[RMDB]
RNA sequence: GGGAACGACUCGAGUAGAGUCGAAAACAGCGCCUUCGGGGUGCAGCGCUUUCAAGCGGCGCGAAUGUGGCAGGGCCGGCUGCUGCUCGUCGGCGACGCCGCGCAUGUGGUCAGCCCCAUCGGCGGGGCAUGAGAAAUGAUUCGUCAUUUCUCAUGCAAAAGAAACAACAACAACAAC
Reactivity to 2A3 in 0.01 (KOAc 150mM, MgCl2 10mM, bicine 150mM(pH8.5), 24C), signal-to-noise 8, nucleotides 027 to 126: c020a020g100c010g010c010c000u060u070c060g040g010g000g020u050g020c060a040g030c020g000c020u080u210u270c140a150a050g050c050g040g000c000g000c010g020a060a080u160g020u080g050g020c020a040g050g060g060c030c020g020g030c020u050g000c010u030g010c030u050c090g150u020c020g030g020c030g030a070c040g000c010c010g000c020g000c020a070u150g050u080g110g100u080c020a020g040c000c000c010c000a040u040c020g020g000c070g020g000g070
Reactivity to DMS in 0.01 (KOAc 150mM, MgCl2 10mM, bicine 150mM(pH8.5), 24C), signal-to-noise 9, nucleotides 027 to 126: c070a180g000c020g010c010c010u000u000c110g010g010g010g030u000g020c110a110g010c020g010c020u000u000u010c250a110a130g020c170g000g010c010g010c010g010a090a080u010g020u000g000g010c020a080g000g000g010c020c030g000g010c010u000g010c030u000g000c020u000c110g010u010c030g010g000c050g010a140c080g010c010c020g020c070g010c100a060u010g020u000g010g010u010c100a300g000c010c000c000c010a040u000c130g010g010c020g000g000g010

An RNA of 177 nucleotides, treated with 2A3 and DMS and read out base by base.
DMS adducts were read by reverse transcription with MarathonRT.
The DMS profile rests on 29,220 reads.
2A3 adducts were read by reverse transcription with SuperScript II with manganese.
Source: RMDB library OK2TRN, as collected in RNAgym.
The 2A3 profile rests on 23,680 reads.